Structure probing data (2A3 and DMS) for a 177-nucleotide construct.
RNA sequence: GGGAACGACUCGAGUAGAGUCGAAAACAAGAACCUCAAGGAUAUAAUCCCGAUGGUGAAGUUGAUGCUGGAGAGUACCGUCAGAUAAUGAUGGUGGACCAUGAGAUGUCAUCGACAGAGACAAAUCCAUACGUCAAGAAUUCGUUCUUGACGUAUGAAAAGAAACAACAACAACAAC
Reactivity to 2A3 in 0.01 (KOAc 150mM, MgCl2 10mM, bicine 150mM(pH8.5), 24C), signal-to-noise 7, nucleotides 027 to 126: c040a020a080g090a060a030c020c030u120c190a080a040g010g000a010u110a020u080a300a190u070c010c000c000g010a040u120g000g060u040g050a090a020g000u040u040g010a020u040g000c020u030g000g040a110g010a030g160u060a010c010c000g000u000c010a010g040a150u220a260a090u130g020a000u010g000g000u020g000g050a040c010c010a050u100g050a050g020a130u160g160u140c010a020u010c030g020a010c010a040g100a010g020a060c030a040a080a040u020c050
Reactivity to DMS in 0.01 (KOAc 150mM, MgCl2 10mM, bicine 150mM(pH8.5), 24C), signal-to-noise 9, nucleotides 027 to 126: c070a110a130g010a300a040c010c000u000c240a210a100g000g010a040u010a110u010a180a140u010c010c000c020g000a150u010g010g010u000g000a120a090g010u000u000g010a050u000g000c020u010g010g010a090g010a220g020u010a020c000c010g020u000c010a020g010a130u010a080a080u010g000a010u000g010g020u000g000g010a110c040c030a060u000g000a110g010a150u000g000u000c010a040u000c020g010a060c150a090g000a120g000a070c090a040a060a120u010c090

For DMS the reverse transcriptase was MarathonRT. The 2A3 profile rests on 8,896 reads. The reactions ran in a buffer of 150 mM KOAc, 10 mM MgCl2 and 150 mM bicine (pH 8.5), at 24 C. DMS (dimethyl sulfate) methylates the pairing face of unpaired adenines and cytosines.